[RMDB]
RNA sequence: GGGAACGACUCGAGUAGAGUCGAAAAGCGCUCGGUCGAAGAGGACGACCAUCCCCGAUAGAGGAGGACCGGUCUUCGGUCAAGGGUAUACGAGUAGCUGCGCUCCCCUGCUAGAACCUCCAAACAAACCGUUGUAUCGGUUCGCCGAUACAACGGUAAAAGAAACAACAACAACAAC
Reactivity to DMS in 0.01 (KOAc 150mM, MgCl2 10mM, bicine 150mM(pH8.5), 24C), signal-to-noise 2, nucleotides 027 to 126: g060c040g000c050u000c130g050g000u010c000g010a050a110g030a070g000g000a090c000g000a150c060c040a290u000c030c000c020c030g000a130u040a170g000a060g000g000a040g000g010a070c020c090g020g020u100c140u000u040c000g000g000u010c070a040a090g000g030g040u030a130u030a090c020g000a060g000u020a020g000c040u000g000c030g000c070u010c000c000c000c010u000g010c020u010a030g000a090a180c000c000u020c020c000a070a140a070c150a060a070
Reactivity to 2A3 in 0.01 (KOAc 150mM, MgCl2 10mM, bicine 150mM(pH8.5), 24C), signal-to-noise 3, nucleotides 027 to 126: g030c030g020c000u000c010g000g020u040c030g000a050a020g070a050g110g080a030c030g020a030c010c020a030u060c040c020c000c000g050a070u180a140g140a070g060g030a050g010g040a010c030c030g000g050u090c020u110u150c010g020g010u040c040a040a060g120g030g000u080a050u040a120c040g000a000g030u050a050g010c040u050g000c010g020c050u050c010c000c000c010u010g010c010u040a010g020a060a060c000c000u000c020c020a000a030a100c020a060a060